Source information
The record gives the reactivity of an RNA of 207 nucleotides to 2A3. The 2A3 profile rests on 953 reads. The RNA was probed in 150 mM KOAc, 10 mM MgCl2 and 150 mM bicine (pH 8.5) at 24 C.

RNA sequence: GGGAACGACUCGAGUAGAGUCGAAAAUCUGGGAUUCGUCCCAGACCCCUGGGGUCUAGUGUGGGACAUGCGAAGUUACUGAAGCCUCCACGGUAACUCGCAACAGCCGUAACAUCACUAGACGGAGGCACCCUAACCACCCCGAUUCGUCGGGGAAACCUGUAUGGACUUUCGAGUCCAUACAGGUAAAAGAAACAACAACAACAAC
Reactivity to 2A3 in 0.01 (KOAc 150mM, MgCl2 10mM, bicine 150mM(pH8.5), 24C), signal-to-noise 1, nucleotides 027 to 156: u000c000u000g000g010g000a000u020u110c200g060u030c160c000c000a010g000a080c000c010c010c030u130g060g030g050g060u010c000u000a000g000u000g010u040g040g060g190a140c070a260u150g000c000g100a150a040g030u010u000a000c000u040g030a110a040g000c000c000u000c000c020a000c000g000g010u010a000a000c000u020c000g050c020a050a150c040a100g270c090c100g120u080a090a020c010a060u190c000a010c000u030a010g000a000c040g010g000a000g000g000c020a030c000c050c000u040a050a060c030c030a080c020c020c020c000g010a000u030u070c170g020u010c010g090g000g030g000a120a030